[RMDB]
RNA sequence: GGGAACGACUCGAGUAGAGUCGAAAAACUUCAUCUUGAGAUAAAGAAGAAGCUGAAGCGACUUUGUCAGAUGCAUUACUUAAUUCUGGUCUAAUAGUUUCACUUUUGUCAGUCAAGUGAAUAAAUACUGAUCCAGUUGCUUCGGCAACUGGAUCAGAAAAGAAACAACAACAACAAC
Reactivity to 2A3 in 0.01 (KOAc 150mM, MgCl2 10mM, bicine 150mM(pH8.5), 24C), signal-to-noise 1, nucleotides 027 to 126: a070c000u170u120c000a180u050c010u000u020g040a040g000a080u300a120a170a000g050a050a000g000a000a000g000c230u000g020a000a000g020c000g040a080c040u000u000u000g020u000c000a000g000a060u010g000c000a060u050u300a230c020u100u210a140a060u060u000c010u020g180g080u000c050u040a010a010u030a070g000u000u000u020c000a000c000u000u090u000u020g160u030c060a070g000u000c000a000a000g040u040g000a000a000u180a100a090a000u130a050